[RMDB]
Conditions: 150 mM KOAc, 10 mM MgCl2 and 150 mM bicine (pH 8.5), 24 C. The record gives the reactivity of an RNA of 177 nucleotides to 2A3 and DMS. Reactivities are given for positions 27 through 126.

RNA sequence: GGGAACGACUCGAGUAGAGUCGAAAAGAAAGAGAGUUUGGUUUUGUUUGGGUUUGUUCUAGGUAUGGUCCCAGGGAUCCCAGAUCAAACCAGGCCCCUGGGCCUAUCCUAGAACCAACCUAAACAAGCUUUACAUUUCUUUCGAGAAAUGUAAAGCAAAAGAAACAACAACAACAAC
Reactivity to 2A3 in 0.01 (KOAc 150mM, MgCl2 10mM, bicine 150mM(pH8.5), 24C), signal-to-noise 6, nucleotides 027 to 126: g110a020a080a000g110a010g030a020g020u050u080u120g090g010u040u070u070u070g000u000u000u010g010g000g000u000u010u000g000u000u000c000u000a000g010g000u050a060u220g010g030u250c000c000c000a000g010g000g010a060u140c010c010c010a030g020a120u160c110a030a070a090c040c010a010g000g010c000c000c000c000u000g000g000g000c000c000u020a020u020c000c000u000a000g000a000a000c000c000a000a000c000c000u000a000a000a000c000a000a000
Reactivity to DMS in 0.01 (KOAc 150mM, MgCl2 10mM, bicine 150mM(pH8.5), 24C), signal-to-noise 5, nucleotides 027 to 126: g000a070a050a040g000a060g030a090g000u010u000u010g010g000u010u020u010u010g010u000u000u010g000g010g000u000u000u010g010u000u000c000u000a000g010g010u010a090u010g010g010u030c010c000c000a010g000g000g000a050u020c110c020c030a120g010a120u020c260a060a100a180c140c090a070g000g000c300c000c010c000u000g010g000g000c020c000u000a040u000c010c000u000a000g000a000a000c010c050a000a000c000c000u000a000a000a000c010a040a050